[RMDB]
The data come from the RNA Mapping Database (RMDB), library TTRDEL.
Chemical mapping of a 177-nucleotide RNA with DMS.
The reactions ran in a buffer of 150 mM KOAc, 10 mM MgCl2 and 150 mM bicine (pH 8.5), at 24 C.
The DMS profile rests on 726 reads.
RNA sequence: GGGAACGACUCGAGUAGAGUCGAAAAGAUAUGGAUUAAGGGAGCUCUGCGUAGGAUAGGAUCGGAAACGAUCCCUGAGCAUCGAUCUUACGGUCCUAAGUCAAACCGCAUGGUUCGCCAUGCGGAACUAUUCAAUCGCCUUCGGGCGAUUGAAUAGAAAAGAAACAACAACAACAAC
Reactivity to DMS in 0.01 (KOAc 150mM, MgCl2 10mM, bicine 150mM(pH8.5), 24C), signal-to-noise 1, nucleotides 027 to 126: g000a100u000a300u010g000g000a010u000u010a230a120g000g000g020a220g010c080u000c020u050g000c030g020u010a100g000g010a100u000a140g010g000a000u000c010g000g000a130a040a180c020g010a020u000c000c020c060u010g000a150g000c070a030u000c110g010a110u010c000u000u000a080c300g010g020u000c000c000u010a060a090g010u000c020a020a080a170c020c000g040c000a040u000g000g010u000u020c300g000c030c020a000u000g000c000g020g020a000a050